[RMDB]
RNA sequence: GGGAACGACUCGAGUAGAGUCGAAAAGGGGCUGAACGGUUUCGACUUCGCGCAUCGAAUCAAGGGAAGCGUGCCGGUGCAGGCAAGAGACCACCGUAAGCGUCGUUGCGACCAAAUAAGCGCCAAAAACAUCCCGGUGCUUCGGCACUGGGAUGUUAAAAGAAACAACAACAACAAC
Reactivity to 2A3 in 0.01 (KOAc 150mM, MgCl2 10mM, bicine 150mM(pH8.5), 24C), signal-to-noise 1, nucleotides 027 to 126: g030g020g040g000c010u030g000a030a020c010g030g010u000u080u100c040g000a030c020u020u030c020g010c000g020c020a070u070c060g070a110a040u060c040a110a110g160g000g000a050a050g100c060g010u010g020c000c010g000g060u120g060c030a030g060g000c030a060a000g050a000g020a090c020c000a010c010c000g100u110a080a020g010c010g050u020c010g010u000u010g010c010g030a000c000c000a030a070a010u040a040a020g030c030g170c020c020a000a020a000
The record gives the reactivity of an RNA of 177 nucleotides to 2A3. 2A3 adducts were read by reverse transcription with SuperScript II with manganese. It was measured as part of the RMDB library OK1LIB. The reactions ran in a buffer of 150 mM KOAc, 10 mM MgCl2 and 150 mM bicine (pH 8.5), at 24 C.